[RMDB]
RNA sequence: GGGAACGACUCGAGUAGAGUCGAAAAAUGAGGAAGAACGUGGCUUUCACCCCGUACUUCUCGAGUUUGUCCAGGACGCGAGGGGUCAUCACCGGAUCGGGUCCGUCGUCGAAGGUGAGGGCGACGACGAGAUGACUAAUUUCGAUUAGUCAUCUCGAAAAGAAACAACAACAACAAC
Reactivity to 2A3 in 0.01 (KOAc 150mM, MgCl2 10mM, bicine 150mM(pH8.5), 24C), signal-to-noise 9, nucleotides 027 to 126: a000u160g020a060g070g030a070a040g020a100a030c040g030u100g080g000c030u090u180u130c050a060c000c000c000c000g000u030a040c010u020u010c040u020c020g010a020g000u030u070u130g060u010c030c030a020g030g010a030c040g010c020g180a030g030g050g010g010u040c040a090u100c020a070c020c020g030g050a060u070c060g090g030g070u000c030c020g020u030c020g010u010c030g040a090a030g060g050u080g040a070g000g050g000c030g020a010c000g010a030
Reactivity to DMS in 0.01 (KOAc 150mM, MgCl2 10mM, bicine 150mM(pH8.5), 24C), signal-to-noise 9, nucleotides 027 to 126: a050u010g000a220g010g000a060a030g010a080a050c040g020u010g020g010c070u000u010u010c170a140c090c000c030c040g010u000a040c010u000u000c000u010c010g000a110g000u000u000u000g000u010c030c030a160g010g010a040c030g000c030g000a050g010g010g010g000u000c130a100u010c100a090c040c020g010g000a120u000c080g010g000g010u000c020c020g010u000c040g010u000c040g010a120a090g010g010u000g000a100g010g010g010c010g010a020c020g000a160

This 177-nucleotide RNA was probed chemically with 2A3 and DMS. 2A3 adducts were read by reverse transcription with SuperScript II with manganese. Values cover nucleotides 27 to 126. The DMS profile rests on 67,396 reads. DMS adducts were read by reverse transcription with MarathonRT.